The data come from the RNA Mapping Database (RMDB), library OK2TRN. An RNA of 177 nucleotides, treated with DMS and read out base by base. The RNA was probed in 150 mM KOAc, 10 mM MgCl2 and 150 mM bicine (pH 8.5) at 24 C. For DMS the reverse transcriptase was MarathonRT. Values cover nucleotides 27 to 126.
[RMDB]
RNA sequence: GGGAACGACUCGAGUAGAGUCGAAAAUAUCAAUACUCCUUUCCCAGGCAUGGACCUUGGGGACACUUCUUAACUCAGCCACGUCGACAACACUCCUCCAUGUUCUCUCAAUUUAGUCUGUGGAAUCUGUACCAAGAGGGUUCGCCCUCUUGGUACAAAAAGAAACAACAACAACAAC
Reactivity to DMS in 0.01 (KOAc 150mM, MgCl2 10mM, bicine 150mM(pH8.5), 24C), signal-to-noise 1, nucleotides 027 to 126: u000a130u000c210a070a080u000a180c160u000c010c000u000u000u010c020c010c020a090g000g000c090a110u030g020g010a080c070c010u000u040g040g020g020g000a030c190a030c120u000u010c040u000u000a070a060c050u000c060a070g020c030c010a030c130g010u000c040g010a070c080a010a070c180a080c070u000c030c000u010c010c030a080u000g000u000u000c010u000c040u000c040a020a060u000u000u010a080g020u010c040u000g010u000g010g010a080a040u030c110